[RMDB]
RNA sequence: GGGAACGACUCGAGUAGAGUCGAAAAGUUUGUUUACCACGUCUUUUGGCUGGAUUUCUGCUGCGAGAGAAUGAGGCCUUACGGCAACAACGCAAGUCUGGCCGUCGUGAUAUUUACGUUGCCCGGAAGCUAUUUGUUUGUCGACGAACCACACAACUCCCAAUUAUACGUUCGCGUAUAAUUGGGAAAAAGAAACAACAACAACAAC
Reactivity to 2A3 in 0.01 (KOAc 150mM, MgCl2 10mM, bicine 150mM(pH8.5), 24C), signal-to-noise 2, nucleotides 027 to 156: g030u070u050u060g010u060u140u100a050c040c000a030c020g050u050c120u040u230u050u160g030g000c000u000g040g030a000u000u140u080c050u110g070c030u010g000c060g000a070g020a000g050a190a070u170g040a050g060g010c000c000u040u090a050c050g000g020c030a060a010c000a030a000c070g030c060a000a090g000u010c010u020g000g020c000c010g010u030c000g010u010g020a040u020a090u170u030u040a040c050g010u020u100g040c000c030c000g030g070a050a040g000c060u090a120u150u060u060g110u030u070u230g030u040c000g020a060c030g040a080a100c080c010a140c080a030c030a060a120c040
Reactivity to DMS in 0.01 (KOAc 150mM, MgCl2 10mM, bicine 150mM(pH8.5), 24C), signal-to-noise 2, nucleotides 027 to 156: g010u000u000u010g020u010u000u000a120c000c010a060c050g010u000c050u000u000u000u000g020g030c020u000g000g020a110u000u020u010c020u000g030c000u000g010c000g040a160g020a160g020a080a100u000g020a210g010g040c080c020u010u000a100c100g050g060c020a090a040c070a020a050c050g000c030a020a030g010u000c020u010g020g010c010c010g000u000c050g030u000g020a030u000a030u000u010u000a080c060g030u010u000g010c040c020c030g040g000a070a080g050c050u010a120u000u000u000g010u000u000u000g040u050c000g000a110c050g000a060a060c030c000a070c100a090c070a070a090c140